[RMDB]
Description
The record gives the reactivity of an RNA of 177 nucleotides to 2A3 and DMS. The data come from the RNA Mapping Database (RMDB), library M2PK90. 2A3 adducts were read by reverse transcription with SuperScript II with manganese. For DMS, 1,061 sequencing reads were counted. The RNA was probed in 150 mM KOAc, 10 mM MgCl2 and 150 mM bicine (pH 8.5) at 24 C.
RNA sequence: GGGAACGACUCGAGUAGAGUCGAAAAGCGCUUAAAUUAAAUUUCCCUUGCUGAGCUCAUCUCAGCAAACAAUAACAAAUAACAAAUAAGAACACCAGGGAAGGCUGUUCUUAUUUGUUACAAUAAAUAACGAUAACACAUUCGUGUGUUAUCGUUAAAAAGAAACAACAACAACAAC
Reactivity to 2A3 in 0.01 (KOAc 150mM, MgCl2 10mM, bicine 150mM(pH8.5), 24C), signal-to-noise 2, nucleotides 027 to 126: g040c070g010c150u140u170a020a050a110u180u100a080a030a170u060u220u030c010c000c030u010u020g020c010u000g010a000g000c090u100c130a200u100c060u000c000a030g030c000a000a000a000c030a010a030u220a050a040c070a070a200a030u060a020a000c000a000a000a000u010a000a000g000a000a000c000a000c030c010a050g200g090g230a160a030g020g100c080u000g000u000u000c000u000u000a000u000u000u000g000u000u000a000c000a000a030u100a020a080a010
Reactivity to DMS in 0.01 (KOAc 150mM, MgCl2 10mM, bicine 150mM(pH8.5), 24C), signal-to-noise 2, nucleotides 027 to 126: g000c190g000c100u000u030a060a050a060u010u000a090a070a180u020u000u000c000c000c000u000u000g000c000u010g020a010g020c270u000c260a070u000c000u000c000a000g000c010a040a010a080c170a130a060u000a020a070c110a060a040a150u010a000a000c010a000a020a000u000a010a000g000a020a010c000a020c040c020a100g010g000g000a140a050g000g040c280u000g020u000u000c000u000u000a000u000u000u000g000u000u000a000c070a010a060u000a030a120a100